[RMDB]
Conditions: 150 mM KOAc, 10 mM MgCl2 and 150 mM bicine (pH 8.5), 24 C.
An RNA of 177 nucleotides, treated with DMS and read out base by base.
Reactivities are given for positions 27 through 126.

RNA sequence: GGGAACGACUCGAGUAGAGUCGAAAAGAUAUGGACUCCGAACUACAUUCUGGGAAACUAUGAAGGCAUAUAACUUCGGAAACGAAGUUAUAUGCUGGAGUUUCUUCAGAAUGCGGAGUCCUAAGUCCGAUAAAAUUCUGUUCGCAGAAUUUUAUCGAAAAGAAACAACAACAACAAC
Reactivity to DMS in 0.01 (KOAc 150mM, MgCl2 10mM, bicine 150mM(pH8.5), 24C), signal-to-noise 1, nucleotides 027 to 126: g000a070u000a270u000g010g000a030c000u010c000c000g000a140a040c090u020a300c000a010u000u010c010u010g000g000g000a000a010a010c000u010a180u000g020a200a300g000g000c000a000u000a000u000a010a000c010u000u000c010g000g000a130a060a160c000g010a010a020g010u000u000a000u000a000u000g020c000u000g000g020a030g010u000u010u000c000u020u020c000a000g000a010a010u000g000c000g000g000a030g000u000c000c000u000a010a110g000u000c050